Chemical mapping of a 177-nucleotide RNA with 2A3.
The reactions ran in a buffer of 150 mM KOAc, 10 mM MgCl2 and 150 mM bicine (pH 8.5), at 24 C.
2A3 adducts were read by reverse transcription with SuperScript II with manganese.
The 2A3 profile rests on 904 reads.

RNA sequence: GGGAACGACUCGAGUAGAGUCGAAAACGUCAGGCAGGGCUUUACCGAAAGGUCUCACUUCACCGAGGCGGCCGCAAGCAUGUGGAUCGCAGGCGAGCUUGUCCACAUCGAGGAUCUCGUUCUCCACCCUCACCCUAGCCUUCGGGCUAGGGUGAGGAAAAGAAACAACAACAACAAC
Reactivity to 2A3 in 0.01 (KOAc 150mM, MgCl2 10mM, bicine 150mM(pH8.5), 24C), signal-to-noise 2, nucleotides 027 to 126: c030g060u040c010a010g000g040c000a000g020g000g000c050u020u020u090a070c020c030g020a050a000a070g090g000u010c010u020c020a050c030u090u080c020a020c040c020g000a030g030g060c010g030g000c000c030g010c060a030a060g100c050a020u060g000u030g050g050a040u070c040g070c090a000g010g090c020g010a020g030c050u060u130g080u080c000c000a070c010a050u020c040g010a000g050g010a060u030c000u000c050g020u010u000c000u050c000c000a010c000